[RMDB]
RNA sequence: GGGAACGACUCGAGUAGAGUCGAAAAGUGGGUGAUGAUGACAAGAUUUAUUUCUUCUUCAUGGAGCGUGAGGAAGGCUCCAGCAGCUUCACACAGAGUCGCAGCAGCCACCGUGUGGCUAGAGUAACACCCCUAUGAGUUUCGACUCAUAGGGGUGAAAAGAAACAACAACAACAAC
Reactivity to 2A3 in 0.01 (KOAc 150mM, MgCl2 10mM, bicine 150mM(pH8.5), 24C), signal-to-noise 1, nucleotides 027 to 126: g110u070g020g030g070u070g010a090u020g020a010u030g020a060c040a040a020g020a040u060u040u070a200u070u220u000c010u030u000c000u010u010c020a100u080g060g070a060g040c100g030u030g090a080g060g080a060a010g070g000c040u010c000c030a010g000c000a000g030c000u060u060c010a000c000a000c000a050g020a000g040u040c040g000c040a100g000c020a010g010c040c030a030c060c060g140u120g020u000g080g000c010u010a010g010a000g160u020a060a020
Reactivity to DMS in 0.01 (KOAc 150mM, MgCl2 10mM, bicine 150mM(pH8.5), 24C), signal-to-noise 4, nucleotides 027 to 126: g010u000g010g000g030u000g010a040u010g010a070u000g000a080c270a070a050g000a050u000u010u020a110u010u010u010c010u000u000c040u000u020c040a060u010g030g010a060g010c060g020u010g000a110g000g010a100a070g020g000c030u000c010c030a060g000c120a060g000c050u010u000c040a060c040a070c060a120g000a050g010u000c060g030c090a090g000c060a070g000c000c020a020c040c210g020u010g010u000g000g000c020u000a060g000a130g010u030a090a130